RNA sequence: GGGAACGACUCGAGUAGAGUCGAAAACAACAUCAAAGAUGCGUACCUAGCUGCGUUUCAACCUGCGUGGGUUGAGGCGGCUUAGCGGAUUAGGGCGUUCUGCCCCAGUGGUACCAUUACCCUAUGCAAAGUCUGCAUGCAGGCAGGGUAGUGUGCUCUAUCGAAAGACCUUCGGGUCUUUCGAUAGAAAAGAAACAACAACAACAAC
Reactivity to 2A3 in 0.01 (KOAc 150mM, MgCl2 10mM, bicine 150mM(pH8.5), 24C), signal-to-noise 1, nucleotides 027 to 156: c020a000a050c080a040u260c130a160a000a040g030a110u160g040c000g070u180a300c020c000u000a000g050c000u000g000c000g030u020u030u000c000a000a000c010c000u060g090c240g160u300g030g000g060u000u000g000a050g010g010c000g070g000c020u000u170a000g000c010g000g070a050u220u300a020g000g000g080c000g130u250u000c080u140g070c010c000c000c010a040g060u090g180g000u030a030c000c000a000u010u010a000c000c030c030u000a080u100g120c010a020a070a060g240u050c030u080g070c030a160u080g040c030a010g150g000c010a000g050g000g010u020a020g000u030g000u000g050c000u000
Notes: This 207-nucleotide RNA was probed chemically with 2A3. It was measured as part of the RMDB library VIROID. For 2A3, 520 sequencing reads were counted.